[RMDB]
RNA sequence: GGGAACGACUCGAGUAGAGUCGAAAAAAAGUGACCGGGGAGGGUCCUUGGAGCACAGGGGGACAAUCGGGUCCGUGGGAUGCUCUUCCCGAUUCCGUCCGAACCCCCCCCCCGAGGGGUCUCCCAGCAAUCUAUAUCAGUUCGCUGAUAUAGAUUGAAAAGAAACAACAACAACAAC
Reactivity to 2A3 in 0.01 (KOAc 150mM, MgCl2 10mM, bicine 150mM(pH8.5), 24C), signal-to-noise 1, nucleotides 027 to 126: a000a000a000g080u060g030a070c060c050g010g000g020g000a010g020g020g180u020c000c000u020u010g000g000a060g040c190a020c070a300g000g000g060g000g010a010c060a060a110u020c020g020g000g060u010c010c000g100u140g000g000g020a020u140g040c070u030c070u180u030c020c030c010g010a030u220u040c020c040g030u030c000c010g030a110a150c030c000c010c000c000c000c020c000c000c000g020a000g040g000g000g300u000c000u000c000c000c000a000g030
Reactivity to DMS in 0.01 (KOAc 150mM, MgCl2 10mM, bicine 150mM(pH8.5), 24C), signal-to-noise 2, nucleotides 027 to 126: a090a060a070g000u000g010a150c030c020g010g020g010g020a050g010g000g000u000c010c010u000u000g000g020a060g010c300a130c290a130g010g000g000g010g020a050c100a100a060u000c040g020g010g000u000c110c080g040u030g000g030g000a050u000g020c170u000c090u000u000c030c000c010g010a100u000u020c130c090g000u000c030c020g040a140a170c030c010c000c010c010c040c020c010c010c010g020a060g000g010g010g000u000c030u000c000c020c010a100g000